RNA sequence: GGGAACGACUCGAGUAGAGUCGAAAAGCAAAACUUGUACACAGAAAUAAUCUACACACCAAUAUCCACGCCUGAUGGAACAAUUGUGAAGAAGUUCAGAGGCAAUAACAGUGGGCAACCUUCCACCGAGCGUCGACAAAUUCGUUUGUCGACGCUCAAAAGAAACAACAACAACAAC
Reactivity to 2A3 in 0.01 (KOAc 150mM, MgCl2 10mM, bicine 150mM(pH8.5), 24C), signal-to-noise 1, nucleotides 027 to 126: g130c030a060a060a000a020c010u040u020g050u160a070c030a000c090a090g060a000a070a120u250a040a080u010c120u100a030c030a010c000a000c080c010a000a000u050a000u190c070c000a000c110g050c000c070u090g050a090u030g050g000a010a090c030a070a090u110u030g000u000g000a020a300g080a060a000g060u080u060c060a080g000a080g040g000c010a000a000u080a020a000c030a000g040u060g030g000g070c000a020a020c000c000u000u050c000c000a060c030c030